Structure probing data (2A3 and DMS) for a 177-nucleotide construct. For 2A3, 1,001 sequencing reads were counted. DMS adducts were read by reverse transcription with MarathonRT.
[RMDB]
RNA sequence: GGGAACGACUCGAGUAGAGUCGAAAAGCUGGGGGUAUAGAUCUAAUAUGACUUGGAUAUCAGAAGAUACGUGGCAGUCAGAAGAAGUACGAGUAGAUUUUGUAACGGGGUGUCGAAACCCCCGUGAUCAUUGGGAAUGGUUCGCCAUUCCCAAUGAAAAAGAAACAACAACAACAAC
Reactivity to 2A3 in 0.01 (KOAc 150mM, MgCl2 10mM, bicine 150mM(pH8.5), 24C), signal-to-noise 1, nucleotides 027 to 126: g100c120u150g000g000g060g000g000u150a040u040a120g060a000u000c000u010a090a050u120a100u180g080a040c010u020u110g050g010a040u030a000u110c000a000g070a100a020g010a040u030a120c030g030u010g050g040c000a010g010u050c030a000g030a080a000g000a040a020g020u030a010c010g010a020g030u050a050g020a300u120u110u070u150g070u050a040a010c020g000g000g000g000u020g070u100c010g020a050a020a010c010c000c030c020c000g000u020g030a030
Reactivity to DMS in 0.01 (KOAc 150mM, MgCl2 10mM, bicine 150mM(pH8.5), 24C), signal-to-noise 4, nucleotides 027 to 126: g000c040u000g000g010g020g010g020u000a080u010a080g000a060u000c030u000a060a100u010a130u010g000a060c090u000u000g020g010a120u010a050u000c050a060g000a110a100g000a070u000a040c090g020u000g020g000c050a050g010u010c040a030g010a080a060g010a070a070g010u010a040c080g010a090g020u000a100g010a130u000u010u010u020g010u010a090a040c020g010g010g000g020u000g010u010c230g010a080a120a140c300c000c000c000c000g000u000g000a090